[RMDB]
RNA sequence: GGGAACGACUCGAGUAGAGUCGAAAAUCAGGUUAUCGAGCACGUAGCGGACAUGUACGGUCGUGAUGCGGUAUCGCAGAUCAUCACCUUCGGUACAAUGGCGGCGAAAGCGGUGAUCCGCGACGUACCCUGGCGCGUAAUUCGUUACGCGCCAGGGAAAAGAAACAACAACAACAAC
Reactivity to 2A3 in 0.01 (KOAc 150mM, MgCl2 10mM, bicine 150mM(pH8.5), 24C), signal-to-noise 1, nucleotides 027 to 126: u070c000a020g090g090u080u080a080u200c010g070a080g110c060a020c070g030u030a000g000c010g000g050a020c030a040u010g060u230a030c050g060g130u020c020g000u080g060a140u110g040c030g060g050u020a010u100c010g000c020a000g020a050u030c050a050u000c000a000c010c000u010u030c000g030g040u020a010c040a150a150u210g150g000c030g030g000c010g160a040a000a060g070c050g000g010u000g000a140u020c020c010g000c000g000a000c000g020u030a050

The record gives the reactivity of an RNA of 177 nucleotides to 2A3. The RNA was probed in 150 mM KOAc, 10 mM MgCl2 and 150 mM bicine (pH 8.5) at 24 C.